About this RNA:
Conditions: 150 mM KOAc, 10 mM MgCl2 and 150 mM bicine (pH 8.5), 24 C. An RNA of 177 nucleotides, treated with DMS and 2A3 and read out base by base. The 2A3 profile rests on 10,598 reads. Values cover nucleotides 27 to 126. The data come from the RNA Mapping Database (RMDB), library OK1LIB.
[RMDB]
RNA sequence: GGGAACGACUCGAGUAGAGUCGAAAAUUGAUAAUCUAACAAAUCGUGAACUUUUGCUAUUGAUGGCCCGAAAAAUGCUCCCCAAUACAGACAAGACCUUUAGAAGUCCGCAGGACUGUGGAUCACCUCUUAUAUUAGGAUUCGUCCUAAUAUAAGAAAAAGAAACAACAACAACAAC
Reactivity to DMS in 0.01 (KOAc 150mM, MgCl2 10mM, bicine 150mM(pH8.5), 24C), signal-to-noise 6, nucleotides 027 to 126: u040u010g010a070u020a080a100u020c050u020a100a090c080a060a110a080u030c060g010u000g010a070a100c070u010u000u010u010g010c070u010a060u010u010g000a040u000g010g000c010c010c020g000a010a040a050a090a020u010g000c020u000c000c010c000c030a060a060u020a050c110a060g000a060c090a080a100g010a080c050c030u000u020u030a100g010a070a110g010u010c020c020g040c100a100g000g010a050c070u000g020u010g010g000a070u000c050a060c130c070
Reactivity to 2A3 in 0.01 (KOAc 150mM, MgCl2 10mM, bicine 150mM(pH8.5), 24C), signal-to-noise 7, nucleotides 027 to 126: u060u020g050a020u050a220a070u040c060u110a100a090c040a070a070a050u110c060g050u040g100a050a080c030u020u040u070u080g010c020u040a060u080u110g050a040u070g040g000c020c000c000g090a100a040a000a010a010u090g020c010u020c000c000c000c000a030a030u090a070c040a010g060a010c010a080a020g060a060c010c000u030u080u100a080g020a170a020g040u010c010c020g040c050a020g010g130a040c080u020g010u040g030g020a020u040c020a050c030c010